The data come from the RNA Mapping Database (RMDB), library OK2TRN.
An RNA of 177 nucleotides, treated with 2A3 and DMS and read out base by base.
For 2A3 the reverse transcriptase was SuperScript II with manganese.
Values cover nucleotides 27 to 126.
DMS adducts were read by reverse transcription with MarathonRT.

RNA sequence: GGGAACGACUCGAGUAGAGUCGAAAACACUGCAACCUCUGCCUCCCAGGUUCAAGUGAUUCUCCUACCUCAGCCUCCUGAGUAGCUGGGACUGCAUGGGACUACAGGCACCCGCCACCAUGUCCGGUCAGCAAUUAUAGUUCGCUAUAAUUGCUGAAAAAGAAACAACAACAACAAC
Reactivity to 2A3 in 0.01 (KOAc 150mM, MgCl2 10mM, bicine 150mM(pH8.5), 24C), signal-to-noise 3, nucleotides 027 to 126: c010a000c000u030g010c020a000a050c000c000u040c070u110g060c000c010u020c000c000c000a000g010g010u000u030c060a080a000g010u000g050a080u060u020c030u010c030c000u030a090c000c020u030c000a010g020c000c010u090c030c020u060g040a040g050u050a020g020c030u060g010g010g040a040c030u050g000c030a060u040g030g010g050a030c050u110a050c160a070g060g000c010a050c030c030c030g000c010c000a020c010c010a030u040g020u010c030c000g040g030
Reactivity to DMS in 0.01 (KOAc 150mM, MgCl2 10mM, bicine 150mM(pH8.5), 24C), signal-to-noise 9, nucleotides 027 to 126: c040a060c050u000g010c140a050a040c040c010u010c070u000g010c040c030u000c010c010c060a050g000g000u000u010c080a090a050g010u000g010a090u000u000c040u000c030c040u000a070c060c030u000c040a050g010c040c020u000c040c020u000g000a050g020u000a050g010c030u000g010g010g010a060c060u000g010c050a060u000g010g000g010a100c060u000a080c100a050g010g010c040a080c070c080c070g010c030c020a060c040c030a050u000g010u000c030c030g010g010